[RMDB]
RNA sequence: GGGAACGACUCGAGUAGAGUCGAAAACUUCAAACUUGGGAAGGUUUGUUCAGAUUUGAGUUUAAGGACUGGAAGGUGAGUUAGGAGUACUUCUUCUGAAGAAGGGACCGGCUAAGUUAAAGCUUAGACCCUAUAAAGGCUUCGGCCUUUAUAGGGUAAAAGAAACAACAACAACAAC
Reactivity to DMS in 0.01 (KOAc 150mM, MgCl2 10mM, bicine 150mM(pH8.5), 24C), signal-to-noise 1, nucleotides 027 to 126: c050u010u000c060a060a060a070c060u010u010g010g030g010a140a080g010g010u000u010u020g020u010u000c060a060g000a080u010u000u010g000a070g000u020u000u000a080a050g030g000a050c070u000g000g000a070a050g020g000u000g010a080g010u030u010a110g010g000a080g030u020a080c100u000u000c030u000u000c080u020g000a050a050g000a050a060g010g000g000a040c080c100g010g000c010u020a020a030g010u000u010a090a070a140g000c020u000u000a040g000
This 177-nucleotide RNA was probed chemically with DMS. The data come from the RNA Mapping Database (RMDB), library OK2TST. For DMS the reverse transcriptase was MarathonRT. The reactions ran in a buffer of 150 mM KOAc, 10 mM MgCl2 and 150 mM bicine (pH 8.5), at 24 C.